[RMDB]
RNA sequence: GGGAACGACUCGAGUAGAGUCGAAAACACUUUUUGGCUAACGGUGCUGCCAUUAGCCAAAAAGUGACUGCCGGUACAUAAACAGAUUUUGUGCUGGUGGUUGAUGGCUUUUAUAUUGAUCUUAUUCUCUUGAUGUGCCACUGGAAUAAACAUUUAAGCAUGCAUUUAGCUUCGGCUAAAUGCAUGCAAAAGAAACAACAACAACAAC
Reactivity to 2A3 in 0.01 (KOAc 150mM, MgCl2 10mM, bicine 150mM(pH8.5), 24C), signal-to-noise 1, nucleotides 027 to 156: c000a000c000u000u000u000u000u000g000g000c000u000a040a000c020g000g010u050g110c260u270g030c020c000a020u000u010a010g000c000c000a000a000a000a000a000g010u000g030a000c000u000g030c000c000g060g010u000a000c020a000u140a040a290a030c120a120g130a150u220u160u020u090g060u040g020c000u000g000g030u000g000g000u100u000g040a120u120g010g030c050u110u120u150u040a290u080a110u150u120g040a080u060c110u170u060a140u200u010c040u000c000u110u090g050a140u080g080u060g040c040c010a020c030u130g030g020a070a030u060a060a210a020c080a110u130u180u110a030a090
This 207-nucleotide RNA was probed chemically with 2A3. The reactions ran in a buffer of 150 mM KOAc, 10 mM MgCl2 and 150 mM bicine (pH 8.5), at 24 C. Source: RMDB library OK3TST, as collected in RNAgym. 2A3 is a SHAPE reagent: it acylates the 2'-hydroxyl of flexible nucleotides of all four kinds. The 2A3 profile rests on 356 reads. 2A3 adducts were read by reverse transcription with SuperScript II with manganese.